[RMDB]
RNA sequence: GGGAACGACUCGAGUAGAGUCGAAAAUUUCGGUCAACAACGAGUGUUCAAGGAAAAGGUGGACACAAAGGCUCCAGAGCCUCCAGAAGGAGUCAAAUACGUCCUCAAUGAGACCACGAACUGGCUGAUUACUCGUGCUAUUCGUAGCACGAGUAAUAAAAGAAACAACAACAACAAC
Reactivity to DMS in 0.01 (KOAc 150mM, MgCl2 10mM, bicine 150mM(pH8.5), 24C), signal-to-noise 5, nucleotides 027 to 126: u010u010u020c010g020g000u000c060a060a080c090a090a100c110g000a160g000u000g000u010u000c010a150a240g000g040a060a090a140a120g000g000u000g000g000a010c030a050c060a080a160a080g020g010c000u000c010c030a150g000a240g000c030c020u000c060c050a120g000a150a190g030g000a050g020u010c010a020a090a060u000a110c130g000u020c010c000u000c030a080a070u020g000a070g000a090c040c020a060c110g010a120a100c100u020g000g000c030u000g000
Reactivity to 2A3 in 0.01 (KOAc 150mM, MgCl2 10mM, bicine 150mM(pH8.5), 24C), signal-to-noise 5, nucleotides 027 to 126: u040u050u040c010g010g000u040c010a020a030c000a060a040c080g040a040g040u040g040u030u030c030a060a150g130g010a100a110a020a030g160g040u050g010g000a010c010a000c010a020a040a010g010g010c000u000c020c010a000g040a060g130c020c020u060c030c010a050g020a160a070g030g000a000g000u010c000a010a190a000u100a020c050g000u010c000c000u020c000a000a080u180g020a030g020a060c010c020a020c020g020a030a030c010u020g020g000c010u010g020